[RMDB]
RNA sequence: GGGAACGACUCGAGUAGAGUCGAAAACAGGAUUCGUCCUGCGAAUAGGGGUCGCUGAGUAGUGCGAAGAACUUGUCAGAACUGAAGCCUCCACGGUUCUUGGAUUUAGGGAGCACGAAAGGCGACGGAGGCACCCACUUUUACCGUUCGCGGUAAAAAGUUAAAUACGGUUCGCCGUAUUUAACUUAAAAGAAACAACAACAACAAC
Reactivity to 2A3 in 0.01 (KOAc 150mM, MgCl2 10mM, bicine 150mM(pH8.5), 24C), signal-to-noise 7, nucleotides 027 to 156: c010a010g010g030a040u090u130c160g060u030c060c000u030g010c050g080a100a150u160a250g060g010g060g000u000c000g000c010u020g000a000g000u020a000g000u010g040c080g110a260a090g050a250a180c040u060u080g030u060c020a000g000a000a000c000u010g020a080a000g030c010c010u020c000c000a020c000g010g000u020u000c020u060u210g140g010a040u150u120u110a110g030g020g070a300g090c000a000c000g010a010a000a000g000g000c000g000a000c000g000g000a000g010g000c000a060c010c020c010a080c020u070u110u020u030a010c000c010g020u040u050c210g000c050g120g010u050a010a010a010
Reactivity to DMS in 0.01 (KOAc 150mM, MgCl2 10mM, bicine 150mM(pH8.5), 24C), signal-to-noise 3, nucleotides 027 to 156: c000a020g020g010a040u000u000c280g020u000c000c000u000g020c030g000a090a140u000a120g010g030g070g020u000c010g010c010u000g010a140g000u000a130g020u000g000c000g030a120a210g010a080a150c020u000u010g020u000c040a100g000a000a120c010u000g000a040a110g000c030c000u000c000c010a300c040g030g010u000u000c010u000u010g050g000a120u000u010u010a080g000g000g010a300g010c010a030c010g000a120a160a300g010g000c020g000a020c020g010g030a040g020g030c040a160c000c000c020a140c160u000u000u000u000a030c000c000g000u000u000c300g000c030g000g010u000a000a030a020